[RMDB]
RNA sequence: GGGAACGACUCGAGUAGAGUCGAAAAGAUAUGGAGGCUGGCUUUUGACGCUCGGGUGGUCGGAAACGACCACAGAGCGAUAAGCCAGCUCCUAAGUCAAACAGUGGUCUGUUCGCAGACCACUGAACGAAAAAAUAGGGUUCGCCCUAUUUUUUCGAAAAGAAACAACAACAACAAC
Reactivity to DMS in 0.01 (KOAc 150mM, MgCl2 10mM, bicine 150mM(pH8.5), 24C), signal-to-noise 3, nucleotides 027 to 126: g010a030u000a300u010g010g010a020g010g000c000u000g010g010c000u000u000u000u010g000a220c100g010c000u010c010g000g050g030u000g000g030u000c020g000g000a060a090a220c000g010a010c000c000a000c010a070g000a010g020c000g020a040u000a010a010g010c010c000a000g010c000u000c010c000u000a030a170g000u000c050a120a090a300c010a010g010u000g000g010u000c000u000g000u010u010c180g010c000a010g000a000c000c000a000c000u000g000a030a090
Reactivity to 2A3 in 0.01 (KOAc 150mM, MgCl2 10mM, bicine 150mM(pH8.5), 24C), signal-to-noise 3, nucleotides 027 to 126: g010a010u080a060u190g000g030a050g200g280c020u020g010g000c020u140u120u120u230g260a150c150g020c020u040c040g300g300g000u010g000g010u020c000g000g000a040a050a040c010g000a000c000c000a000c000a010g010a000g000c010g010a020u020a000a000g000c000c010a000g000c010u000c000c000u000a020a010g020u010c050a030a100a160c010a030g000u010g000g000u010c000u010g090u100u110c300g000c170a000g000a000c020c010a000c000u010g010a010a010
The record gives the reactivity of an RNA of 177 nucleotides to DMS and 2A3. Conditions: 150 mM KOAc, 10 mM MgCl2 and 150 mM bicine (pH 8.5), 24 C. For 2A3 the reverse transcriptase was SuperScript II with manganese. DMS adducts were read by reverse transcription with MarathonRT. For DMS, 3,190 sequencing reads were counted.